[RMDB]
RNA sequence: GGGAACGACUCGAGUAGAGUCGAAAAACGCCUACUACGGUAGGCGAAUGGAAAGCCCCGUGUUGUGGUCUGACCCCCGACCCCGACCGCAACGCGGGGCAAUCCGACGACCGUUACGACGGUCGAAACCUAGCGACGAAUUCGUUCGUCGCUAGGUAAAAGAAACAACAACAACAAC
Reactivity to 2A3 in 0.01 (KOAc 150mM, MgCl2 10mM, bicine 150mM(pH8.5), 24C), signal-to-noise 2, nucleotides 027 to 126: a000c010g000c010c000u000a000c000u020a030c190g120g000u000a000g010g010c000g000a020a060u100g010g010a000a000a010g000c000c000c000c000g010u000g010u010u000g000u010g010g010u020c040u080g160a200c010c000c020c020c010g070a140c010c050c030c020g000a000c000c000g000c000a000a000c000g010c000g010g010g000g000c000a000a000u010c000c000g000a010c000g000a000c000c010g000u010u020a090c210g010a000c000g070g010u010c010g010a020a020
Reactivity to DMS in 0.01 (KOAc 150mM, MgCl2 10mM, bicine 150mM(pH8.5), 24C), signal-to-noise 1, nucleotides 027 to 126: a160c030g010c010c010u010a000c000u000a260c180g040g010u000a000g000g010c000g000a030a000u090g000g010a020a010a300g000c000c010c000c020g000u000g000u000u000g000u010g000g000u000c000u040g000a150c040c030c010c030c030g020a170c010c020c080c080g000a000c000c020g000c000a000a000c020g020c010g040g010g050g000c000a000a000u010c020c000g060a160c020g000a010c000c000g000u000u020a140c140g020a030c060g000g010u000c000g000a020a040
Annotation:
Conditions: 150 mM KOAc, 10 mM MgCl2 and 150 mM bicine (pH 8.5), 24 C. An RNA of 177 nucleotides, treated with 2A3 and DMS and read out base by base. The 2A3 profile rests on 2,513 reads. DMS adducts were read by reverse transcription with MarathonRT. For DMS, 1,832 sequencing reads were counted.